Chemical mapping of a 177-nucleotide RNA with 2A3. Values cover nucleotides 27 to 126. Source: RMDB library RFM100, as collected in RNAgym. Conditions: 150 mM KOAc, 10 mM MgCl2 and 150 mM bicine (pH 8.5), 24 C. For 2A3 the reverse transcriptase was SuperScript II with manganese.
RNA sequence: GGGAACGACUCGAGUAGAGUCGAAAAGGGCUGCGUCUGGACCUUUCGGGGACCGGAUGCGGCCUGGCGGUCGGGCUGCUCUUGUUGUGCCGGAGAGAAAGGUAGUUGGCUUUCGGGCUGGCUGCUGGACGGAUCUCGUGUUCGCACGAGAUCCGUCAAAAGAAACAACAACAACAAC
Reactivity to 2A3 in 0.01 (KOAc 150mM, MgCl2 10mM, bicine 150mM(pH8.5), 24C), signal-to-noise 1, nucleotides 027 to 126: g040g000g020c010u000g000c000g010u000c000u000g070g020a130c000c000u010u080u200c280g030g000g000g040a060c010c000g000g000a000u000g000c000g030g000c000c000u000g000g020c040g070g050u050c020g000g000g060c010u010g000c000u030c000u030u050g020u000u010g000u020g030c010c020g000g030a050g020a040g000a100a030a000g050g020u070a070g000u000u000g030g020c020u060u040u180c300g000g000g010c000u010g010g000c000u000g000c000u010g000